[RMDB]
RNA sequence: GGGAACGACUCGAGUAGAGUCGAAAAGGGAUGAUCGUCGUGCGCACGCUGCCGAGAAAUGCGUAGAUCACGACGACGACGAGCACGACGUUCAGCAGCAGCGUGAGCUCGAUGUCGAGCAGCGAUAUCCAAAAUCCUCAUUCGUGAGGAUUUUGGAAAAAGAAACAACAACAACAAC
Reactivity to DMS in 0.01 (KOAc 150mM, MgCl2 10mM, bicine 150mM(pH8.5), 24C), signal-to-noise 3, nucleotides 027 to 126: g000g000g010a150u010g000a080u010c030g000u000c020g020u000g010c090g000c070a070c010g000c010u010g010c050c030g000a190g010a060a090a060u010g000c040g020u000a100g010a200u000c060a080c020g020a070c080g000a030c110g020a120c120g000a150g000c030a060c050g010a070c050g000u010u010c040a140g040c170a140g010c050a060g000c000g000u000g000a110g010c000u000c020g000a110u000g000u010c060g000a120g000c070a140g000c080g000a080u010a100
Reactivity to 2A3 in 0.01 (KOAc 150mM, MgCl2 10mM, bicine 150mM(pH8.5), 24C), signal-to-noise 2, nucleotides 027 to 126: g100g020g070a090u120g020a030u130c070g020u000c020g000u000g010c020g010c040a000c010g020c000u030g040c020c060g090a110g150a020a040a020u150g030c050g010u050a060g020a130u100c050a010c050g050a010c070g040a020c000g030a020c050g030a020g000c030a000c060g120a020c030g050u030u030c020a130g000c000a000g030c020a000g000c020g020u030g040a030g000c000u020c020g040a050u110g040u110c030g000a010g000c030a030g050c040g050a030u050a060